[RMDB]
RNA sequence: GGGAACGACUCGAGUAGAGUCGAAAAGAUAUGGAGUGAUAGGCGUUGAAAUCAGGGUUCGGAAACGAACCUGAUGGAGCCUAAUACUCCUAAGUCAAACCUCUUAGUGACUUCGGUCACUAAGAGGGUAUCAAGUGCCGUUCGCGGCACUUGAUACAAAAGAAACAACAACAACAAC
Reactivity to DMS in 0.01 (KOAc 150mM, MgCl2 10mM, bicine 150mM(pH8.5), 24C), signal-to-noise 2, nucleotides 027 to 126: g010a010u000a140u020g000g010a030g020u010g000a120u000a010g020g030c000g060u030u030g000a130a110a020u010c000a030g000g010g040u000u000c020g010g000a010a020a070c010g020a050a070c000c000u000g010a020u000g010g030a080g000c000c010u000a020a100u000a010c000u000c010c000u000a010a050g010u010c010a190a130a300c000c000u010c000u000u000a010g010u000g000a000c000u010u010c260g020g000u000c010a010c000u000a000a010g000a010g010g020
Reactivity to 2A3 in 0.01 (KOAc 150mM, MgCl2 10mM, bicine 150mM(pH8.5), 24C), signal-to-noise 1, nucleotides 027 to 126: g020a000u050a030u060g020g000a010g000u020g040a060u020a050g020g000c080g100u300u290g090a050a020a030u000c020a030g170g120g000u210u120c020g020g000a010a000a010c000g020a020a030c000c010u020g000a010u000g020g080a030g000c010c010u000a010a010u020a010c000u020c010c010u010a010a000g010u000c020a020a060a280c020c000u000c010u000u000a000g010u000g010a000c020u020u030c300g160g000u020c000a000c000u000a000a000g010a010g000g000
An RNA of 177 nucleotides, treated with DMS and 2A3 and read out base by base. For 2A3 the reverse transcriptase was SuperScript II with manganese. The data come from the RNA Mapping Database (RMDB), library TTRDES.